The data come from the RNA Mapping Database (RMDB), library TTRDES. The record gives the reactivity of an RNA of 177 nucleotides to DMS. The DMS profile rests on 3,694 reads. The reactions ran in a buffer of 150 mM KOAc, 10 mM MgCl2 and 150 mM bicine (pH 8.5), at 24 C.
RNA sequence: GGGAACGACUCGAGUAGAGUCGAAAAGAUAUGGAUUCGGCAAGGGAGACGGCAUUUCGGAAACGAAAUGCCGUCAUCGAUCUUGUCCGAAUCCUAAGUCAAACAGAUAGAGUUCGCUCUAUCUGAAUCAAUGGAUUACGUUCGCGUAAUCCAUUGAAAAAGAAACAACAACAACAAC
Reactivity to DMS in 0.01 (KOAc 150mM, MgCl2 10mM, bicine 150mM(pH8.5), 24C), signal-to-noise 3, nucleotides 027 to 126: g000a050u010a300u020g000g000a020u000u000c010g000g010c000a010a000g000g000g000a070g030a030c000g010g010c000a000u000u000u000c000g000g000a140a130a220c000g010a000a010a000u010g000c000c000g010u000c020a010u000c230g010a060u010c000u000u010g000u020c010c010g000a020a000u000c000c000u000a010a090g030u000c030a170a140a300c000a010g000a000u000a000g000a010g010u000u020c300g040c010u000c000u000a000u000c000u000g000a100a080